[RMDB]
An RNA of 207 nucleotides, treated with 2A3 and read out base by base. 2A3 adducts were read by reverse transcription with SuperScript II with manganese. The RNA was probed in 150 mM KOAc, 10 mM MgCl2 and 150 mM bicine (pH 8.5) at 24 C. The 2A3 profile rests on 662 reads.

RNA sequence: GGGAACGACUCGAGUAGAGUCGAAAAGGCAAUAACGAAAUAAUUCUAAGCAAGUAAUGGAGAAAUGCCAGGGUCACUAUCUAGCCAUAAUAGUGCUUGACAGUAUGAUACUAACUGAACAAUAAGUAAAAGCGCUGGUACUUCGGUACCAGCGCAACAUCUGACCAGAGUUCGCUCUGGUCAGAUGAAAAGAAACAACAACAACAAC
Reactivity to 2A3 in 0.01 (KOAc 150mM, MgCl2 10mM, bicine 150mM(pH8.5), 24C), signal-to-noise 1, nucleotides 027 to 156: g000g000c040a080a140u260a250a030c080g040a080a040a010u170a030a060u060u080c060u040a050a040g010c040a040a000g040u010a040a180u070g040g000a000g050a040a090a030u060g050c050c070a030g040g040g010u030c000a010c030u000a000u070c010u030a000g000c000c010a000u000a050a030u010a080g020u040g020c000u010u000g010a000c010a010g010u020a000u050g010a000u000a060c010u040a000a010c010u030g010a010a000c000a010a100u070a140a000g000u020a000a000a150a150g010c010g050c020u040g000g000u000a000c010u030u050c110g020g000u010a010c010c040a000g000c000g020c000a000a000